[RMDB]
RNA sequence: GGGAACGACUCGAGUAGAGUCGAAAAAUCAGAGGACGAGAGGGGAUGAGAUGGUAAAGAAGCGAGGAACGCCGAGGGGAUGUCUCCCAAGAAGGCAAAGAGAAGGCAAGAAUCGGACGCUCUCCCCGAUAAAACUAUAGUUCGCUAUAGUUUUAUCAAAAGAAACAACAACAACAAC
Reactivity to 2A3 in 0.01 (KOAc 150mM, MgCl2 10mM, bicine 150mM(pH8.5), 24C), signal-to-noise 2, nucleotides 027 to 126: a000u040c010a030g040a070g100g000a020c060g010a030g020a040g140g000g020g010a010u110g010a030g030a100u110g050g090u140a070a110a080g040a080a030g110c030g010a040g020g030a060a020c010g000c040c020g020a030g000g000g020g000a020u050g050u060c020u050c040c020c000a010a030g060a020a020g040g000c010a010a070a000g060a020g010a060a020g040g000c030a020a010g000a050a050u030c030g030g000a020c030g020c010u030c000u010c000c000c000c000
Reactivity to DMS in 0.01 (KOAc 150mM, MgCl2 10mM, bicine 150mM(pH8.5), 24C), signal-to-noise 4, nucleotides 027 to 126: a060u000c050a110g000a120g000g020a080c070g000a080g020a130g010g020g020g010a050u020g020a050g010a060u000g010g010u010a070a060a100g010a090a110g040c110g000a050g000g000a130a100c150g020c040c030g000a120g000g000g000g010a170u000g000u010c070u010c010c030c100a080a110g010a070a050g010g010c030a030a040a130g010a080g000a050a100g000g000c050a040a070g010a190a080u000c040g000g000a090c060g010c020u000c050u000c000c010c020c130